Background:
This 177-nucleotide RNA was probed chemically with 2A3 and DMS. The data come from the RNA Mapping Database (RMDB), library OK2TST. The RNA was probed in 150 mM KOAc, 10 mM MgCl2 and 150 mM bicine (pH 8.5) at 24 C. Reactivities are rounded to 0.1 and cut off at 0 and 3. For 2A3 the reverse transcriptase was SuperScript II with manganese.
RNA sequence: GGGAACGACUCGAGUAGAGUCGAAAACGGUACAGAUUAGACGAGCCGCCGCUGAAUAGAAGGAAUGAUGUCGCCGCCUGGAAGGCAGCCUUGGAAAAUGCGCACAGUCAACUUGAGCACCAGUAUAAAACAUAGAACGAUUCGUCGUUCUAUGUUUAAAAGAAACAACAACAACAAC
Reactivity to 2A3 in 0.01 (KOAc 150mM, MgCl2 10mM, bicine 150mM(pH8.5), 24C), signal-to-noise 5, nucleotides 027 to 126: c020g010g010u070a030c030a040g110a180u120u250a050g030a100c030g020a010g010c010c010g030c030c010g000c070u050g040a080a050u110a190g100a120a030g040g040a090a070u090g060a080u070g080u100c020g010c050c010g020c020c020u060g070g030a070a030g050g000c010a010g010c000c010u020u030g060g030a080a050a030a040u120g020c020g010c030a010c020a050g030u050c010a050a050c060u050u070g020a010g020c010a020c030c010a010g040u040a070u060a190
Reactivity to DMS in 0.01 (KOAc 150mM, MgCl2 10mM, bicine 150mM(pH8.5), 24C), signal-to-noise 8, nucleotides 027 to 126: c070g000g010u000a090c090a100g010a130u010u010a090g020a090c050g010a120g010c040c030g020c040c020g010c040u000g010a080a100u000a100g010a090a080g000g010a080a050u000g010a090u000g020u000c060g010c030c050g000c050c030u000g000g020a090a080g010g010c030a050g000c030c030u010u010g000g000a050a050a060a070u000g010c070g000c050a070c070a070g000u000c040a040a070c090u000u000g010a070g010c040a090c040c040a070g000u000a100u000a060